RNA sequence: GGGAACGACUCGAGUAGAGUCGAAAAUCGUCGGAAAGCUGUGUCCAGAACAUCAGUGAAUCUGGAUUUUAAGUGUAUUGGGACGGACAUCCGUCUGACAUCUUCAGCCAAUCCCUGUAGUGCAACAAAGGGAUUAACCCAAUAUGCUCGUUUAUCCAAUUAUGGGUCUAUUCGUAGACCCAUAAUUAAAAGAAACAACAACAACAAC
Reactivity to DMS in 0.01 (KOAc 150mM, MgCl2 10mM, bicine 150mM(pH8.5), 24C), signal-to-noise 7, nucleotides 027 to 156: u000c040g020u010c010g010g000a090a080a270g010c010u000g020u010g020u000c030c070a170g020a080a120c070a140u000c060a100g010u000g010a080a220u000c030u000g010g010a040u000u000u000u000a000a050g020u000g010u000a030u010u000g010g010g000a170c080g020g020a160c180a120u010c030c010g010u000c020u000g000a100c080a090u000c100u000u000c030a040g020c050c040a100a120u000c090c140c010u000g010u000a120g020u000g010c100a090a090c070a040a080a050g000g020g010a040u000u000a040a070c000c000c000a020a020u000a010u000g010c000u000c050g020u000u000u000a080u010c030c070
Reactivity to 2A3 in 0.01 (KOAc 150mM, MgCl2 10mM, bicine 150mM(pH8.5), 24C), signal-to-noise 8, nucleotides 027 to 156: u040c020g150u020c040g030g020a070a010a010g010c030u030g020u020g020u100c050c030a070g080a120a020c020a060u250c040a030g040u020g110a080a100u010c030u040g020g010a020u020u020u030u090a030a010g000u010g000u010a010u000u010g010g000g000a010c000g000g020a040c050a150u150c020c020g010u010c010u010g010a010c010a140u080c050u120u030c010a010g010c020c020a010a000u010c000c000c000u020g070u130a190g070u100g210c050a080a050c030a100a210a020g000g000g000a000u010u010a000a010c000c000c000a000a000u010a000u020g000c000u010c040g050u040u060u060a080u070c040c000

Structure probing data (DMS and 2A3) for a 207-nucleotide construct. The 2A3 profile rests on 8,305 reads. The RNA was probed in 150 mM KOAc, 10 mM MgCl2 and 150 mM bicine (pH 8.5) at 24 C. It was measured as part of the RMDB library OK3TST.